An RNA of 177 nucleotides, treated with DMS and read out base by base. For DMS the reverse transcriptase was MarathonRT. It was measured as part of the RMDB library OK2TST. Values cover nucleotides 27 to 126.
RNA sequence: GGGAACGACUCGAGUAGAGUCGAAAAAAGUAUCUUGAAAUAAAGCAGGAGAGUAAGGCUGUCAGUGCAGACUUCUCUCCAUGUCUGUUCUCAGAUCAUCUUGAAAAACCUAUGAGAAGUGAUAAGAUGAGACUAACGAUUUCGAUCGUUAGUCUCAAAAAGAAACAACAACAACAAC
Reactivity to DMS in 0.01 (KOAc 150mM, MgCl2 10mM, bicine 150mM(pH8.5), 24C), signal-to-noise 1, nucleotides 027 to 126: a030a080g010u020a040u000c000u000u020g010a040a080a040u010a060a080a090g000c020a050g010g010a020g000a030g010u010a010a010g000g000c010u000g000u000c170a140g030u020g000c000a030g000a030c000u020u000c000u000c010u000c010c010a020u000g010u000c030u000g030u000u000c120u010c040a020g000a030u000c130a080u000c050u000u000g000a100a050a040a130a110c050c090u000a060u000g000a130g000a070a120g000u000g010a140u010a050a030g010a170